[RMDB]
RNA sequence: GGGAACGACUCGAGUAGAGUCGAAAACCGGUCACCUUCGGGUGACCGGAAAGAUACGUAGUCGUUGGUCACAAAUUACGCACAAUGGCAUAAUUAAAAUAAAAAUCAGUCCCUUCGGGGACUGAAACCUUAUGUAAGAGUUCGCUCUUACAUAAGGAAAAGAAACAACAACAACAAC
Reactivity to 2A3 in 0.01 (KOAc 150mM, MgCl2 10mM, bicine 150mM(pH8.5), 24C), signal-to-noise 3, nucleotides 027 to 126: c010c000g030g000u000c000a010c010c000u040u090c240g140g000g010u000g000a000c000c000g020g000a000a020a010g000a010u110a030c050g070u120a030g020u050c010g010u020u020g060g140u070c010a000c050a090a110a060u110u100a040c030g040c020a040c070a160a240u160g090g000c010a020u050a110a050u170u210a090a130a080a060u200a050a070a030a010a020u020c000a010g000u000c000c000c000u020u020c200g030g000g000g000a000c000u000g000a000a000a010
Reactivity to DMS in 0.01 (KOAc 150mM, MgCl2 10mM, bicine 150mM(pH8.5), 24C), signal-to-noise 3, nucleotides 027 to 126: c000c000g020g010u000c000a000c000c000u000u020c200g040g030g030u000g010a000c000c000g010g000a000a020a150g010a090u010a070c030g030u000a040g010u000c010g000u000u000g020g010u010c050a110c190a070a050a080u000u000a030c090g000c000a090c150a100a060u010g010g010c010a050u010a020a030u000u030a040a050a030a120u010a040a070a060a150a130u020c010a000g000u000c000c000c000u000u010c210g000g000g000g010a020c000u000g000a010a050a090
Source: RMDB library M2PK50, as collected in RNAgym.
Structure probing data (2A3 and DMS) for a 177-nucleotide construct.
Reactivities are given for positions 27 through 126.
For DMS the reverse transcriptase was MarathonRT.
For 2A3 the reverse transcriptase was SuperScript II with manganese.